[RMDB]
RNA sequence: GGGAACGACUCGAGUAGAGUCGAAAAGACGUGGAGGUUCCGCGCCCUCCUUUGCGCGUAAGUACGUCGAAAUUCGGUGCUUAGGAUCGCACCGUUGGAUCCAUUUGAUAUCCGCUUUGUGCCGCGGUUGGGCAUUUACACUUACCCGAAAGGGGAAAUAGCAUAUCAGGUUCGCCUGAUAUGCUAUAAAAGAAACAACAACAACAAC
Reactivity to 2A3 in 0.01 (KOAc 150mM, MgCl2 10mM, bicine 150mM(pH8.5), 24C), signal-to-noise 3, nucleotides 027 to 156: g030a020c020g010u050g040g060a110g020g090u180u100c020c020g000c000g020c010c010c010u090c040c020u090u150u100g040c010g000c010g030u040a070a050g030u030a060c040g010u000c040g020a000a060a080u100u060c020g020g000u010g000c040u070u120a100g110g070a090u150c060g000c000a000c010c000g010u020u020g020g010a020u040c050c010a090u100u080u250g150a100u070a050u060c010c020g030c040u090u120u100g080u050g040c000c030g010c050g060g000u100u020g050g000g020c000a000u070u010u080a040c080a010c030u040u110a040c000c000c030g020a070a030a030g000g000g000g000a060a100
Reactivity to DMS in 0.01 (KOAc 150mM, MgCl2 10mM, bicine 150mM(pH8.5), 24C), signal-to-noise 2, nucleotides 027 to 156: g010a060c040g030u010g000g010a110g010g010u000u000c050c040g030c050g020c090c020c030u000c070c030u000u010u000g030c000g020c040g000u000a070a100g020u000a050c070g000u000c060g000a100a090a160u000u000c000g020g020u000g030c010u010u010a120g060g010a110u010c140g000c020a060c020c000g020u000u010g000g000a070u010c050c060a200u010u000u010g010a150u000a120u040c030c020g010c050u000u000u010g020u000g020c000c040g000c040g010g020u000u010g000g000g020c030a090u010u000u000a140c100a050c090u000u010a190c010c000c000g020a050a090a170g000g020g020g000a020a050